RNA sequence: GGGAACGACUCGAGUAGAGUCGAAAAGCCGCAGCUGGCGUCAUCGACAUCUUAGAUGAUCCAGAAGUUCGUUUGCAGCAAAUCCUUGCUCAUGAAUACCUAAUGAGUAAGCUUCAGCAUGUCGAUGCCCUGUACACACCUUCGGGUGUGUACAGGGAAAAGAAACAACAACAACAAC
Reactivity to DMS in 0.01 (KOAc 150mM, MgCl2 10mM, bicine 150mM(pH8.5), 24C), signal-to-noise 1, nucleotides 027 to 126: g000c060c040g030c140a170g000c070u000g010g000c220g000u040c000a010u000c010g010a130c160a120u000c220u030u000a130g010a020u000g040a060u000c010c030a010g000a100a140g050u000u000c010g070u000u010u000g080c050a100g000c040a080a090a080u000c160c050u000u000g000c000u000c000a040u000g010a220a160u000a150c300c160u000a100a060u000g000a010g010u000a000a090g010c200u000u000c170a040g000c000a010u000g000u000c010g010a040u010g020